[RMDB]
RNA sequence: GGGAACGACUCGAGUAGAGUCGAAAAGUUCAUGAAUCACACAGAAUAUUUUCAGAGGACUUAUGGAUUGAUAACCAUGGGAACUUUGUCAGCUUUUGGAAGACUCUUUCUUCCAAAGUACAGCAACCUAACCUGUUCAUCAAUUGCAAUAGAGGACACAUAGAACGACAUUCGUGUCGUUCUAUGUAAAAGAAACAACAACAACAAC
Reactivity to 2A3 in 0.01 (KOAc 150mM, MgCl2 10mM, bicine 150mM(pH8.5), 24C), signal-to-noise 6, nucleotides 027 to 156: g010u030u040c020a020u100g070a070a070u130c060a050c020a020c020a120g130a180a100u140a140u130u130u070u060c020a020g040a080g050g020a020c000u040u070a020u110g020g010a010u020u070g030a030u070a050a040c040c030a080u110g000g000g030a030a030c020u020u050u060g060u120c060a050g010c010u070u080u150u130g000g000a010a000g000a020c020u020c040u270u290u000c010u040u000c000c000a000a000a000g020u040a030c040a010g010c010a020a010c010c000u030a040a040c000c020u020g020u060u030c050a030u010c010a060a090u040u090g090c020a030a050u050a140g060a040g040g050a020c010
Reactivity to DMS in 0.01 (KOAc 150mM, MgCl2 10mM, bicine 150mM(pH8.5), 24C), signal-to-noise 2, nucleotides 027 to 156: g000u000u000c020a080u020g000a090a050u010c070a100c040a220c130a200g030a060a300u000a080u000u000u000u000c030a120g000a170g030g010a090c020u000u000a070u000g020g020a060u000u000g020a090u010a060a100c080c050a030u020g010g000g010a090a110c010u010u000u000g000u000c040a280g020c000u000u000u000u010g020g000a050a020g030a050c300u000c160u000u000u000c000u000u000c010c000a010a010a010g010u000a000c070a130g000c030a040a060c020c010u000a040a110c040c020u000g000u010u000c040a010u000c040a030a070u000u000g000c050a030a120u000a110g020a140g000g000a180c170
Structure probing data (2A3 and DMS) for a 207-nucleotide construct. DMS adducts were read by reverse transcription with MarathonRT. Reactivities are given for positions 27 through 156. It was measured as part of the RMDB library OK3TST.